Source: RMDB library RFM100, as collected in RNAgym. The record gives the reactivity of an RNA of 177 nucleotides to 2A3 and DMS. DMS adducts were read by reverse transcription with MarathonRT. For DMS, 2,888 sequencing reads were counted. Conditions: 150 mM KOAc, 10 mM MgCl2 and 150 mM bicine (pH 8.5), 24 C.
RNA sequence: GGGAACGACUCGAGUAGAGUCGAAAAGACGACAAAAAAGCGCCUGGACUAAGCGCGGGAACGGACGCGCGCUUAGUUGACGAGGAGGAGGUUUAUCGAGGUUUUCGGCGGAUGCCUCCCGGCUGGAGGGAACAUACUUGUUCGCAAGUAUGUUCCCAAAAGAAACAACAACAACAAC
Reactivity to 2A3 in 0.01 (KOAc 150mM, MgCl2 10mM, bicine 150mM(pH8.5), 24C), signal-to-noise 3, nucleotides 027 to 126: g040a000c050g000a000c080a020a190a000a020a000a000g090c070g010c000c000u010g010g010a020c000u000a000a000g000c010g000c020g030g000g010a200a140c130g070g180a030c060g030c000g000c000g000c130u000u000a000g010u000u040g050a040c060g030a030g050g010a020g040g000a020g000g080u000u110u100a070u140c020g050a080g030g120u030u100u170u190c030g080g020c010g030g000a010u080g000c000c010u000c020c010c000g050g010c020u030g020g040a030
Reactivity to DMS in 0.01 (KOAc 150mM, MgCl2 10mM, bicine 150mM(pH8.5), 24C), signal-to-noise 2, nucleotides 027 to 126: g000a150c080g040a210c190a000a040a000a050a080a060g000c150g000c000c000u010g020g030a010c000u020a000a000g000c010g010c000g000g000g030a110a130c140g020g010a120c030g000c020g000c000g040c000u000u000a020g000u000u000g000a100c080g000a060g010g000a050g060g000a030g000g000u000u000u020a070u000c020g000a090g030g020u020u000u030u010c040g000g000c100g000g000a060u060g030c020c000u000c000c000c010g000g030c030u000g010g000a300